[RMDB]
RNA sequence: GGGAACGACUCGAGUAGAGUCGAAAAGCUCUGGAAUUGAGGCCCCUCUAACAACAAUCCAAAACUACUUCGCAGAGUAAUCUGCCGAAUCGUAGGAUGCCCAUUACUAUCUAUUUUUGGAGCAUCUAAAACUGUCAGUGCUUCGGCACUGACAGAACACAGGUAGUUAGUUCGCUAACUACCUGUGAAAAGAAACAACAACAACAAC
Reactivity to 2A3 in 0.01 (KOAc 150mM, MgCl2 10mM, bicine 150mM(pH8.5), 24C), signal-to-noise 4, nucleotides 027 to 156: g000c000u000c020u060g030g090a120a060u160u060g010a040g030g020c010c010c010c000u080c100u130a110a130c100a010a000c010a020a080u030c030c030a020a050a030a080c010u030a010c000u000u010c000g000c010a000g000a010g030u100a140a140u010c000u000g060c110c040g010a010a020u060c030g030u010a020g080g000a000u010g000c000c000c000a030u030u020a080c070u080a080u250c050u090a220u120u120u000u000u000g030g000a130g000c000a000u000c000u060a000a020a020a160c010u000g000u000c000a000g000u010g000c000u010u080c150g050g000c000a000c010u000g000a000c000a010g000a010a000
Reactivity to DMS in 0.01 (KOAc 150mM, MgCl2 10mM, bicine 150mM(pH8.5), 24C), signal-to-noise 2, nucleotides 027 to 156: g010c070u020c050u010g010g000a080a050u000u000g000a060g020g010c030c020c020c000u000c040u020a130a140c040a040a100c060a100a160u000c040c010a050a100a090a130c040u000a100c110u000u000c060g040c000a070g020a030g000u000a110a130u000c010u000g000c030c040g000a070a050u000c080g040u020a110g010g010a030u000g010c020c000c030a080u010u000a120c130u000a130u000c110u010a170u000u000u000u000u000g040g000a100g030c040a040u000c030u010a040a050a080a130c010u000g010u000c000a000g000u000g010c000u000u000c290g080g020c010a000c000u010g020a010c010a010g000a050a140